The record gives the reactivity of an RNA of 177 nucleotides to DMS.
DMS adducts were read by reverse transcription with MarathonRT.
It was measured as part of the RMDB library OK2TST.
RNA sequence: GGGAACGACUCGAGUAGAGUCGAAAACGUUCAGCGUCGUCUUCGUGUCGGUGCGCGACGCGUUCGGCCCGCUGAAGAUGUCGGACGGAAUCGGCGUGUAGACGGGCCGGUACAGGUUCAGGCUCGAUAAUCCCACCACGUUCGCGUGGUGGGAUUAAAAAGAAACAACAACAACAAC
Reactivity to DMS in 0.01 (KOAc 150mM, MgCl2 10mM, bicine 150mM(pH8.5), 24C), signal-to-noise 1, nucleotides 027 to 126: c050g030u000u000c100a130g020c020g000u000c050g000u000c010u020u020c060g030u010g000u000c030g020g000u010g020c130g000c030g020a000c040g020c070g000u010u000c050g010g000c000c030c010g030c030u000g010a080a080g010a010u000g020u000c020g000g000a100c140g030g000a100a140u000c030g010g030c030g030u000g020u010a100g020a090c070g000g000g000c000c010g000g000u000a040c100a110g020g000u000u000c080a200g020g000c010u000c030g020a200